[RMDB]
Description:
The record gives the reactivity of an RNA of 207 nucleotides to 2A3 and DMS. Values cover nucleotides 27 to 156. The 2A3 profile rests on 1,587 reads. For DMS the reverse transcriptase was MarathonRT. The reactions ran in a buffer of 150 mM KOAc, 10 mM MgCl2 and 150 mM bicine (pH 8.5), at 24 C.
RNA sequence: GGGAACGACUCGAGUAGAGUCGAAAAUAUUGGAGGAGAAGUAUGGGAAAAAUUAAAACAGGUUUAUCUUGGGAUGAAUGGGAUGAACAAGUCAGCGAGUCAGCAAAGGAUGAAGCCCAAGCAAUGUACCAUGCAAGUAAAUUAGAAAACUGCAUGGCUAAGAUCUUUGGUUCGCCAAAGAUCUUAGAAAAGAAACAACAACAACAAC
Reactivity to 2A3 in 0.01 (KOAc 150mM, MgCl2 10mM, bicine 150mM(pH8.5), 24C), signal-to-noise 2, nucleotides 027 to 156: u160a040u060u100g020g000a020g000g010a050g000a050a050g080u120a070u170g040g000g000a010a200a050a030a030u110u110a010a080a040a030c050a020g000g070u010u080u070a050u110c020u070u100g060g010g000a030u080g040a070a100u080g010g000g020a010u050g020a100a030c020a060a040g060u050c010a000g060c010g020a010g020u040c020a000g020c040a020a080a010g050g010a000u050g040a030a000g000c000c000c020a010a000g020c000a000a040u070g000u010a040c010c000a000u010g010c000a000a090g030u120a040a170a150u170u120a110g140a090a090a000a000c000u010g000c000a010u000g000g000
Reactivity to DMS in 0.01 (KOAc 150mM, MgCl2 10mM, bicine 150mM(pH8.5), 24C), signal-to-noise 2, nucleotides 027 to 156: u000a100u000u000g030g010a030g000g000a040g020a030a070g030u000a050u010g030g010g010a020a070a060a100a230u030u000a040a090a100a140c060a080g000g040u000u000u000a050u010c020u000u010g020g000g010a110u000g000a030a100u010g030g020g020a070u000g020a070a060c050a050a100g010u000c050a050g000c050g010a150g000u000c060a040g000c040a050a040a140g000g040a090u000g010a070a140g020c020c010c010a040a130g000c020a020a070u000g030u000a130c000c010a010u010g000c000a020a070g010u010a080a060a190u000u000a210g000a080a040a050a080c060u010g030c000a000u000g000g010